This 177-nucleotide RNA was probed chemically with DMS. Reactivities are given for positions 27 through 126. The RNA was probed in 150 mM KOAc, 10 mM MgCl2 and 150 mM bicine (pH 8.5) at 24 C.

RNA sequence: GGGAACGACUCGAGUAGAGUCGAAAAGAUAUGGACUCGGUACUACUGUCUAUGAAGUCGGAAACGAUGGAGACAGUAGUAUUUCGAGUCCUAAGUCAAAACGGUCGAGACUUCGGUCUCGACCGAAUCAACAGGAUGCGUUCGCGCAUCCUGUUGAAAAAGAAACAACAACAACAAC
Reactivity to DMS in 0.01 (KOAc 150mM, MgCl2 10mM, bicine 150mM(pH8.5), 24C), signal-to-noise 1, nucleotides 027 to 126: g010a040u000a300u010g020g010a010c000u000c000g000g040u000a010c020u010a000c000u040g000u000c000u010a280u000g010a060a220g020u000c000g000g000a140a090a170c010g000a010u020g000g000a080g010a000c000a020g010u010a010g010u000a000u000u020u010c020g000a040g020u000c000c000u000a010a050g010u020c010a100a080a090a180c010g000g020u000c020g000a000g030a020c010u000u030c250g050g000u010c000u000c000g000a010c000c050g010a000a050